An RNA of 177 nucleotides, treated with DMS and 2A3 and read out base by base. The reactions ran in a buffer of 150 mM KOAc, 10 mM MgCl2 and 150 mM bicine (pH 8.5), at 24 C. Values cover nucleotides 27 to 126.
[RMDB]
RNA sequence: GGGAACGACUCGAGUAGAGUCGAAAAUAGGCUAAUACUUCUAUGAAGAGAUGCCUUGGAUAGGGUAACAGCGGCGGAUAUUGGUGAGUUGUUAAGACAAAAACCAUUCAACGCCGAAGGACUGGCUGCCAGAUAGAUAAUUCGUUAUCUAUCUGGCAAAAGAAACAACAACAACAAC
Reactivity to DMS in 0.01 (KOAc 150mM, MgCl2 10mM, bicine 150mM(pH8.5), 24C), signal-to-noise 5, nucleotides 027 to 126: u020a020g010g000c000u010a100a150u060a030c000u000u000c010u050a160u060g010a020a020g000a060g010a300u020g000c010c000u000u000g000g010a120u020a080g010g000g010u010a050a040c090a040g000c000g010g010c000g010g020a190u020a040u000u010g000g020u000g010a110g010u010u010g000u040u040a090a100g010a040c020a010a070a110a230a100c010c010a010u010u010c080a070a220c010g010c010c010g000a040a040g000g010a110c040u020g000g010c150u010
Reactivity to 2A3 in 0.01 (KOAc 150mM, MgCl2 10mM, bicine 150mM(pH8.5), 24C), signal-to-noise 5, nucleotides 027 to 126: u100a000g000g000c020u030a030a050u090a260c000u040u020c060u110a200u300g020a010a000g010a000g000a030u090g010c000c000u000u010g020g000a050u110a110g060g000g030u080a110a030c020a050g030c010g010g000c010g010g010a040u040a040u240u020g010g000u020g010a070g060u010u030g040u140u210a080a040g020a020c030a000a060a000a000a010c000c000a000u010u020c030a040a000c000g000c000c000g000a010a000g020g020a020c050u050g030g060c020u020